[RMDB]
RNA sequence: GGGAACGACUCGAGUAGAGUCGAAAAGUUCAGUCGUUCGCGACUGAACAAACUGUGAAGCGCGAAAACACAGAAAACAAACGGCAACGCGCGUAUCGGCGAAAACCCUGCAGUUCGCUGCAGGGAAGUUAUAGAAUUCCUUCGGGAAUUCUAUAACAAAAGAAACAACAACAACAAC
Reactivity to 2A3 in 0.01 (KOAc 150mM, MgCl2 10mM, bicine 150mM(pH8.5), 24C), signal-to-noise 2, nucleotides 027 to 126: g000u000u000c000a000g010u010c010g010u040u050c200g010c010g090a010c000u020g000a000a000c000a010a000a000c010u030g000u010g050a110a040g010c040g010c010g120a090a070a100a000c020a020c020a040g090a070a140a010a020c070a020a090a010c070g110g020c060a050a030c010g020c010g000c000g030u050a080u180c050g060g010c060g060a030a000a070a130c000c000c000u000g000c000a020g010u010u100c150g010c130u010g000c000a000g000g000g000a000a000
Reactivity to DMS in 0.01 (KOAc 150mM, MgCl2 10mM, bicine 150mM(pH8.5), 24C), signal-to-noise 3, nucleotides 027 to 126: g010u000u000c000a000g000u000c000g010u000u040c220g020c020g060a010c000u010g000a010a000c000a050a090a070c010u000g020u000g000a120a100g010c020g030c060g000a090a080a070a090c020a010c020a060g010a100a070a110a110c140a050a070a150c120g010g000c110a070a200c030g010c010g010c010g020u000a060u000c040g010g000c070g010a060a070a070a100c000c000c000u000g020c000a010g010u000u010c190g020c000u020g000c010a000g010g000g010a010a010
About this RNA: Conditions: 150 mM KOAc, 10 mM MgCl2 and 150 mM bicine (pH 8.5), 24 C. The record gives the reactivity of an RNA of 177 nucleotides to 2A3 and DMS. The 2A3 profile rests on 3,172 reads. DMS adducts were read by reverse transcription with MarathonRT.